[RMDB]
RNA sequence: GGGAACGACUCGAGUAGAGUCGAAAACGGCGUUUCGCCCGGACAAAGCUCAGAUACCAGGUAUCCGACCAGAGGUAAGUGAGAAAUCACCAGCACCGAUCCGAUCUCUUCAUUGGCCAGCGCCUGGAUACUCAGGAUCAUUCGUGAUCCUGAGUAUAAAAGAAACAACAACAACAAC
Reactivity to 2A3 in 0.01 (KOAc 150mM, MgCl2 10mM, bicine 150mM(pH8.5), 24C), signal-to-noise 7, nucleotides 027 to 126: c010g020g010c020g020u030u070u150c070g020c030c020c000g020g000a020c040a040a140a020g020c010u020c050a010g040a090u080a060c020c010a010g030g000u070a090u040c020c030g060a060c010c030a020g030a050g130g040u100a090a070g040u020g040a040g040a050a070a030u070c020a020c050c000a010g020c020a030c030c040g010a050u010c020c010g030a090u010c040u010c000u120u050c050a140u070u160g040g000c020c010a030g000c010g020c000c000u020g030g020
Reactivity to DMS in 0.01 (KOAc 150mM, MgCl2 10mM, bicine 150mM(pH8.5), 24C), signal-to-noise 6, nucleotides 027 to 126: c080g010g010c070g020u000u010u010c070g030c030c010c020g010g010a110c090a070a100a130g000c030u000c040a030g020a120u030a060c040c040a080g000g000u010a070u020c040c080g010a100c050c020a090g010a090g010g000u010a060a110g020u010g010a060g000a080a110a100u000c040a040c000c050a050g000c040a060c040c040g020a080u000c040c030g000a090u020c030u000c020u010u010c090a100u010u020g010g000c020c010a050g010c070g010c010c000u000g000g000